[RMDB]
RNA sequence: GGGAACGACUCGAGUAGAGUCGAAAAAUCCUAGCGAGGUUGCUCUAAACGACAAAAAUCAGAGGAAUGCAGCGGACCUCAUCUCUAGGACCCGAGUAUUGUUCAACGGGAGACCAGAGGUCACAUGCAUACGCAAGACUUUCGAGUCUUGCGUAUGAAAAGAAACAACAACAACAAC
Reactivity to DMS in 0.01 (KOAc 150mM, MgCl2 10mM, bicine 150mM(pH8.5), 24C), signal-to-noise 4, nucleotides 027 to 126: a110u000c000c000u000a020g030c110g000a040g010g010u000u000g000c000u010c030u000a040a100a200c130g030a060c100a030a070a060a120a230u000c050a050g000a280g000g010a070a070u000g000c040a030g000c040g020g000a030c010c000u000c020a080u000c040u010c020u010a050g010g010a080c010c010c010g000a110g020u000a080u000u010g000u000u000c100a120a070c030g030g010g010a140g000a130c040c040a090g010a030g020g000u010c060a090c210a080u000g000
Reactivity to 2A3 in 0.01 (KOAc 150mM, MgCl2 10mM, bicine 150mM(pH8.5), 24C), signal-to-noise 3, nucleotides 027 to 126: a010u000c000c000u020a000g030c010g020a020g000g110u010u010g000c000u000c000u040a220a250a030c060g100a030c100a040a210a020a020a030u110c040a030g040a040g150g070a120a060u130g020c030a000g000c010g030g000a010c000c010u000c000a030u020c010u000c000u020a020g000g020a010c000c000c000g000a020g040u100a190u210u300g130u150u180c070a120a050c050g000g020g000a040g030a030c010c020a020g000a010g040g020u030c020a020c000a080u140g010